[RMDB]
RNA sequence: GGGAACGACUCGAGUAGAGUCGAAAAACGAGUAUAGUGCUCAUACGUGAGCACUAUACUCGAAGUGAGUUUCGUACACUUAAUUAAUAGGAUCGGCCGUUAAUAAAAGUAUGCCGAACUCGCAGAAAGCCUAUCUACCGUUCGCGGUAGAUAGGCUAAAAGAAACAACAACAACAAC
Reactivity to 2A3 in 0.01 (KOAc 150mM, MgCl2 10mM, bicine 150mM(pH8.5), 24C), signal-to-noise 1, nucleotides 027 to 126: a000c000g000a000g010u000a000u010a000g010u000g020c000u020c010a000u050a040c270g100u110g000a000g000c000a000c000u000a000u000a000c000u000c000g000a000a000g000u090g010a020g010u050u010u160c000g020u060a000c000a000c000u000u030a020a000u010u000a020a010u030a300g050g000a110u190c150g240g040c040c000g000u000u000a060a000u000a000a240a000a070g030u000a010u110g030c020c000g010a000a000c000u000c000g050c030a060g090a110a150